[RMDB]
RNA sequence: GGGAACGACUCGAGUAGAGUCGAAAAGAAAGAAAGAAAGAAAUCUGACAGAAUGACGGAUUCGAUCGUUGUGGUCGGCAGGCCACCACGUCAUUCCUUCGCACUGUCUCCGGGCAGACCGCCAUAAAAAAGCGGAUCUACUUCGGUAGAUCCGCAAGUACUUUGGAAGGUUCGCCUUCCAAAGUACAAAAGAAACAACAACAACAAC
Reactivity to 2A3 in 0.01 (KOAc 150mM, MgCl2 10mM, bicine 150mM(pH8.5), 24C), signal-to-noise 1, nucleotides 027 to 156: g020a030a010a000g080a050a080a030g060a090a200a020g080a030a130a020u120c130u150g000a020c000a000g070a140a120u090g000a000c000g020g010a000u090u190c170g010a100u270c020g020u000u010g000u000g000g000u020c040g060g110c150a150g010g000c000c000a010c010c010a000c000g020u000c000a000u000u030c000c000u000u000c020g040c010a020c000u000g000u000c000u040c060c000g010g010g000c000a010g020a130c030c080g060c010c010a070u270a060a130a000a000a040a050g010c000g010g020a000u010c000u000a000c000u010u040c030g020g000u000a000g000a000u020c000c000g000c010a000a000